[RMDB]
RNA sequence: GGGAACGACUCGAGUAGAGUCGAAAAUUUGAUUGGCUAUACCAGAUAACUACUAGGAGUUUAAACAUACUAGUCCUUAAAUUGGUGCUGGGCACAGGAUUCGAACCUGCAACGGGAUUACUCCUCCUACGCAGUACAAUUUCGAUUGUACUGCGUAAAAAGAAACAACAACAACAAC
Reactivity to DMS in 0.01 (KOAc 150mM, MgCl2 10mM, bicine 150mM(pH8.5), 24C), signal-to-noise 4, nucleotides 027 to 126: u000u000u000g010a180u010u000g010g010c020u010a070u000a090c010c010a060g010a200u000a040a050c060u010a040c020u000a040g000g030a130g020u000u000u010a100a110a100c060a060u010a170c040u000a020g020u000c020c030u000u010a020a080a170u010u000g010g010u000g000c180u000g010g000g020c050a070c060a060g010g000a150u000u000c100g000a040a080c030c010u000g000c060a070a060c100g000g000g000a100u010u010a080c040u010c010c010u010c110c090
Reactivity to 2A3 in 0.01 (KOAc 150mM, MgCl2 10mM, bicine 150mM(pH8.5), 24C), signal-to-noise 3, nucleotides 027 to 126: u100u020u140g060a080u050u110g060g000c050u100a060u060a270c000c020a000g080a140u070a020a120c050u060a000c000u020a040g040g050a030g030u090u140u300a190a230a030c030a030u300a030c010u010a000g030u020c000c010u230u170a130a300a070u120u070g030g000u060g000c050u050g080g030g000c060a030c040a080g060g030a030u090u100c040g010a070a060c040c020u020g050c020a080a090c030g050g000g000a040u070u060a060c010u000c030c020u000c000c000

The record gives the reactivity of an RNA of 177 nucleotides to DMS and 2A3. Conditions: 150 mM KOAc, 10 mM MgCl2 and 150 mM bicine (pH 8.5), 24 C. It was measured as part of the RMDB library OK2TRN. The 2A3 profile rests on 1,683 reads.